Overview
Chemical mapping of a 207-nucleotide RNA with 2A3. 2A3 adducts were read by reverse transcription with SuperScript II with manganese. Source: RMDB library RNAMAK, as collected in RNAgym.

RNA sequence: GGGAACGACUCGAGUAGAGUCGAAAAGGGGUCACUCAAGCUCAUCGAUCUUAAAGGGAGGCUCUCUGAAGCCUCCACGGAGAGCCGAAGAACUUUAAGGGAGAGCUAAAAGUGACGGAGGCACCCAAAGCACUGAGAUGUUCGCAUCUCAGUGCAAACAUGGGUUUUAGUUCGCUAAAACCCAUGUAAAAGAAACAACAACAACAAC
Reactivity to 2A3 in 0.01 (KOAc 150mM, MgCl2 10mM, bicine 150mM(pH8.5), 24C), signal-to-noise 1, nucleotides 027 to 156: g120g020g050g000u000c010a000c000u010c010a000a050g000c010u020c000a160u300c060g000a020u010c000u010u010a010a000a000g000g020g010a040g010g000c000u000c000u000c000u020g050a060a020g000c000c000u000c000c000a000c000g000g000a010g020a000g000c020c020g160a140a060g050a030a020c000u000u000u000a000a000g020g000g010a020g000a000g010c000u000a010a020a000a010g000u010g000a000c030g000g000a010g000g000c000a060c020c000c000a100a090a010g020c010a000c000u010g000a000g020a000u020g040u190u210c290g040c110a010u000c000u000c000a000g000u000g000c000a000a000